[RMDB]
RNA sequence: GGGAACGACUCGAGUAGAGUCGAAAAGAUUGUGGUUCUGACGGUGCCCCGGCAGUCAGGCAAGACAACGCUCAUGCGGACGGUCUUGGCUCAGCGUGCUUUGAAGUGCCGCAACCGUAAGGCGUUCGCUCAAUCUGAUUUUCGAAUCAGAUUGAGCAAAAGAAACAACAACAACAAC
Reactivity to 2A3 in 0.01 (KOAc 150mM, MgCl2 10mM, bicine 150mM(pH8.5), 24C), signal-to-noise 4, nucleotides 027 to 126: g110a060u100u150g040u090g120g020u150u100c030u000g040a030c010g060g070u080g000c000c000c000c000g060g020c000a030g000u030c030a010g000g020c010a030a030g070a040c060a060a020c040g020c020u080c060a090u300g000c000g000g020a090c020g080g000u030c010u020u020g030g030c030u030c030a080g050c070g160u180g010c030u080u130u250g140a110a050g040u030g120c020c000g010c070a050a100c020c020g030u020a020a050g010g020c020g060u050u110c090
Reactivity to DMS in 0.01 (KOAc 150mM, MgCl2 10mM, bicine 150mM(pH8.5), 24C), signal-to-noise 3, nucleotides 027 to 126: g010a150u020u000g020u000g010g010u000u000c030u010g020a050c020g010g010u000g000c050c010c020c100g010g010c040a100g020u000c050a020g000g020c070a130a040g010a060c130a060a050c040g020c010u000c090a170u000g010c020g000g010a130c110g010g020u020c020u000u000g020g010c040u010c100a120g000c100g010u020g000c020u000u020u000g000a100a090g020u010g000c000c000g030c050a100a060c030c020g000u010a080a130g000g010c020g020u000u010c140
Structure probing data (2A3 and DMS) for a 177-nucleotide construct. For 2A3 the reverse transcriptase was SuperScript II with manganese. For DMS, 3,234 sequencing reads were counted. For DMS the reverse transcriptase was MarathonRT. Reactivities are given for positions 27 through 126. The RNA was probed in 150 mM KOAc, 10 mM MgCl2 and 150 mM bicine (pH 8.5) at 24 C.